[RMDB]
RNA sequence: GGGAACGACUCGAGUAGAGUCGAAAAGCACUACUAACUCAUGCACACAGAGAGGGAGACGCAUUUCUUGCUGGAGUUACGAGUUACGACUCUUACCUACUAUUGAUUUUGUUAGCUCCAGUGAGUUAGUGUAAAUUUUCUUCGGAAAAUUUACACUAAAAGAAACAACAACAACAAC
Reactivity to DMS in 0.01 (KOAc 150mM, MgCl2 10mM, bicine 150mM(pH8.5), 24C), signal-to-noise 2, nucleotides 027 to 126: g000c070a080c050u010a080c100u000a040a130c030u000c040a070u000g020c080a060c090a100c090a130g010a100g000a080g000g000g000a040g020a080c140g030c070a080u010u000u000c010u000u020g020c000u010g000g000a030g010u000u000a020c080g010a050g020u000u010a150c140g010a020c030u000c030u000u000a060c090c100u020a070c200u000a120u010u000g010a120u000u000u000u010g000u000u000a020g000c000u000c010c000a040g000u000g000a010g020u000u000
Reactivity to 2A3 in 0.01 (KOAc 150mM, MgCl2 10mM, bicine 150mM(pH8.5), 24C), signal-to-noise 2, nucleotides 027 to 126: g000c020a000c070u100a020c010u020a100a050c030u050c070a060u150g050c010a040c010a000c040a040g040a000g000a070g090g010g000a040g000a020c050g020c050a080u100u100u060c010u030u030g000c000u000g000g000a000g010u010u030a030c040g010a000g010u020u060a060c160g060a030c050u050c000u040u060a080c020c040u060a060c010u070a170u090u140g070a090u060u100u070u150g040u080u030a000g000c000u000c000c000a030g000u000g010a000g040u010u010

Chemical mapping of a 177-nucleotide RNA with DMS and 2A3. Values cover nucleotides 27 to 126. For DMS, 1,178 sequencing reads were counted. For 2A3 the reverse transcriptase was SuperScript II with manganese.